This 207-nucleotide RNA was probed chemically with DMS and 2A3. The RNA was probed in 150 mM KOAc, 10 mM MgCl2 and 150 mM bicine (pH 8.5) at 24 C. For 2A3 the reverse transcriptase was SuperScript II with manganese. For DMS the reverse transcriptase was MarathonRT. It was measured as part of the RMDB library OK3TST.
[RMDB]
RNA sequence: GGGAACGACUCGAGUAGAGUCGAAAACAUUGCUACUGCCGAACAGGAUGGUAAGGCGGUGUUCCAGCUGAGCGAUUGGAGCUACCUCCUCGUACCCAAGGAAACCCCCACCGAAUGGAUCAAGCUGUAAGGACGUCGAGCCCCACAAGGGCUCACGGAUUGGAUCCUUGUUCGCAAGGAUCCAAUCAAAAGAAACAACAACAACAAC
Reactivity to DMS in 0.01 (KOAc 150mM, MgCl2 10mM, bicine 150mM(pH8.5), 24C), signal-to-noise 1, nucleotides 027 to 156: c030a100u000u000g020c040u000a060c030u000g000c120c010g020a150a250c040a050g030g020a230u000g000g010u010a100a130g010g060c030g050g000u000g020u000u000c020c020a060g000c060u000g010a120g020c020g020a100u010u010g020g000a080g030c030u000a110c080c010u000c010c020u010c060g040u010a030c050c010c020a070a190g010g020a060a080a250c030c000c010c000c020a050c120c030g000a120a060u000g040g000a000u000c010a030a090g030c080u000g040u040a030a160g040g000a120c020g000u000c000g020a020g020c000c000c000c000a120c200a150a260g000g030g050c000u000c000a000c030g000
Reactivity to 2A3 in 0.01 (KOAc 150mM, MgCl2 10mM, bicine 150mM(pH8.5), 24C), signal-to-noise 2, nucleotides 027 to 156: c020a060u020u080g050c030u050a050c040u050g040c000c000g030a070a030c040a090g140g040a130u130g030g000u130a030a080g050g000c060g000g000u080g040u050u000c010c000a020g000c050u090g030a050g050c010g110a110u000u160g000g000a020g000c070u100a090c000c000u000c000c000u010c020g050u030a060c030c010c020a030a050g030g010a040a040a100c010c000c000c010c000a030c000c010g070a040a020u080g020g040a030u080c030a000a040g040c020u000g060u120a010a140g010g020a050c000g010u030c070g010a000g000c000c000c000c020a090c020a030a020g000g020g000c010u020c000a000c010g010